[RMDB]
RNA sequence: GGGAACGACUCGAGUAGAGUCGAAAAUUAAUAGAUUUCGAUCUAUUAAACAGGCGGAGGCUCGCUCGUAGCGACCGGCGCAAGCGCGCACGGUACAGCGAAUACUGAAUCCCUUCGGGGAUUCAAACAUACAAAAGUUCUUCGGAACUUUUGUAUGAAAAGAAACAACAACAACAAC
Reactivity to DMS in 0.01 (KOAc 150mM, MgCl2 10mM, bicine 150mM(pH8.5), 24C), signal-to-noise 2, nucleotides 027 to 126: u000u000a010a000u000a000g000a010u010u000u010c110g010a020u010c000u000a000u000u000a010a030a160c100a080g000g010c030g020g000a230g000g000c040u000c030g000c040u000c040g020u020a130g010c060g030a040c000c010g000g000c010g030c010a130a100g020c220g020c010g010c030a030c010g010g000u000a040c030a120g010c030g010a080a100u000a100c190u000g010a010a000u000c000c000c000u000u010c200g020g000g010g010a000u000u000c000a030a040a200
Reactivity to 2A3 in 0.01 (KOAc 150mM, MgCl2 10mM, bicine 150mM(pH8.5), 24C), signal-to-noise 1, nucleotides 027 to 126: u060u000a000a020u010a010g010a020u040u130u060c120g020a020u030c000u000a010u000u070a020a070a050c050a040g180g060c040g040g090a030g000g000c020u020c010g020c000u020c020g090u040a020g080c050g050a000c000c000g000g050c020g010c030a260a270g240c130g000c010g000c170a090c090g000g000u030a070c010a020g070c040g030a050a000u120a170c070u010g010a000a000u010c000c060c000u010u050c200g000g000g010g000a000u010u000c000a000a000a000